Description
An RNA of 177 nucleotides, treated with DMS and 2A3 and read out base by base. Values are in units of 0.01, from 0 to 300, in steps of 10. For 2A3, 1,191 sequencing reads were counted. It was measured as part of the RMDB library OK2TST. The reactions ran in a buffer of 150 mM KOAc, 10 mM MgCl2 and 150 mM bicine (pH 8.5), at 24 C.
RNA sequence: GGGAACGACUCGAGUAGAGUCGAAAACAAUCGUGGGAUCCUGAGCCGUACGACAUCGUAUCCGUCGUCUAUAUGCGCGGCAGGAUCUUCGUCUGGCAGCAAGUUCUGGAUCCACGACUACGGAUCCGCACGGAAAAGCGUUCGCGCUUUUCCGUGCAAAAGAAACAACAACAACAAC
Reactivity to DMS in 0.01 (KOAc 150mM, MgCl2 10mM, bicine 150mM(pH8.5), 24C), signal-to-noise 1, nucleotides 027 to 126: c080a160a200u000c070g050u010g030g030g000a080u000c040c000u000g000a090g030c030c090g000u020a090c230g010a060c240a040u000c070g000u000a070u000c050c030g030u000c000g020u000c080u000a160u030a090u000g020c230g030c010g000g000c030a160g020g000a010u000c000u000u000c020g010u010c020u000g040g040c060a110g070c130a100a170g010u000u000c010u020g020g000a000u000c000c000a050c010g000a080c190u020a050c300g010g000a070u020c000c020
Reactivity to 2A3 in 0.01 (KOAc 150mM, MgCl2 10mM, bicine 150mM(pH8.5), 24C), signal-to-noise 1, nucleotides 027 to 126: c000a000a020u040c000g000u060g010g190g000a050u000c010c030u030g050a010g000c010c000g060u080a060c020g020a000c020a030u060c070g080u230a030u040c000c030g020u000c000g040u000c080u070a250u070a070u300g040c090g000c020g070g000c020a120g000g000a000u060c000u000u000c000g000u000c020u040g050g000c000a060g040c040a160a110g040u100u000c040u010g030g030a000u000c000c020a000c000g000a020c000u050a020c040g040g030a020u000c010c000